[RMDB]
Chemical mapping of a 177-nucleotide RNA with DMS and 2A3. It was measured as part of the RMDB library OK2TST. DMS adducts were read by reverse transcription with MarathonRT.

RNA sequence: GGGAACGACUCGAGUAGAGUCGAAAAUUCUCGGCCAGGUCGAAACCCGGCAGGUCCAUGCCAUCGGAAAUCCCGGCGCGGGCAUAGGGGCCGUCUGCGUCGGCUUCGAGGAAGCGAUAGCCGAGGACAUAAUAGUGAGGUUCGCCUCACUAUUAUGAAAAGAAACAACAACAACAAC
Reactivity to DMS in 0.01 (KOAc 150mM, MgCl2 10mM, bicine 150mM(pH8.5), 24C), signal-to-noise 9, nucleotides 027 to 126: u010u000c010u000c000g010g010c020c120a090g010g010u000c040g010a060a100a150c180c030c080g000g020c030a050g010g010u000c040c040a110u010g000c010c020a130u000c030g000g010a070a110a090u010c150c000c000g000g010c050g020c050g000g010g010c010a080u010a100g010g010g010g010c260c090g000u000c040u000g010c030g020u000c010g010g010c130u000u000c020g000a180g010g010a090a090g010c040g010a050u000a110g010c000c010g000a040g000g010a160
Reactivity to 2A3 in 0.01 (KOAc 150mM, MgCl2 10mM, bicine 150mM(pH8.5), 24C), signal-to-noise 6, nucleotides 027 to 126: u020u010c000u000c000g000g010c020c030a100g000g110u040c020g030a090a090a110c040c020c010g000g000c030a040g070g060u000c040c010a050u070g020c010c000a080u050c020g030g060a080a080a140u110c010c000c000g020g000c030g010c040g020g000g010c030a050u170a150g070g000g050g020c030c010g010u010c050u080g000c010g010u010c000g010g010c010u020u010c020g040a050g020g080a080a030g060c030g050a040u060a030g000c000c000g010a020g000g000a000